[RMDB]
An RNA of 177 nucleotides, treated with 2A3 and DMS and read out base by base. For 2A3, 2,097 sequencing reads were counted. In probing experiments dimethyl sulfate is read out at A N1 and C N3, which are open when not base-paired. Values cover nucleotides 27 to 126. For DMS the reverse transcriptase was MarathonRT.
RNA sequence: GGGAACGACUCGAGUAGAGUCGAAAAGCAUUCUCAAAUGCCAUCGUUGCUACGUCACAUACUUUUUGUUUCAUUGGAUCAUCUGAUUCUCCAACGACAAAUGAAAUGCCUGUAUCUGCAUAAUAGCUCCCGUAAUAGUGUUCGCACUAUUACGGGAAAAAGAAACAACAACAACAAC
Reactivity to 2A3 in 0.01 (KOAc 150mM, MgCl2 10mM, bicine 150mM(pH8.5), 24C), signal-to-noise 2, nucleotides 027 to 126: g030c010a040u010u040c060u020c070a020a040a040u060g000c020c010a080u040c040g010u000u070g000c030u030a060c030g040u040c040a030c010a090u130a140c130u080u160u080u110u090g080u000u080u050c060a060u050u100g000g030a030u030c010a050u000c090u130g010a100u080u020c040u000c020c030a020a020c030g080a020c010a030a070a010u100g050a030a000a030u020g010c000c000u050g060u100a120u040c040u070g030c030a010u050a120a030u000a300g010c020
Reactivity to DMS in 0.01 (KOAc 150mM, MgCl2 10mM, bicine 150mM(pH8.5), 24C), signal-to-noise 4, nucleotides 027 to 126: g000c120a130u000u010c090u000c050a120a110a110u010g000c060c050a070u000c040g020u000u000g000c060u010a050c110g000u000c050a090c090a080u020a040c140u000u000u010u000u010g010u010u000u000c050a130u000u010g010g010a070u000c040a140u000c130u000g010a090u010u010c030u010c090c030a020a020c070g010a040c050a030a040a060u010g010a070a070a040u000g010c060c040u000g010u010a050u000c050u000g020c030a080u000a060a100u000a110g000c140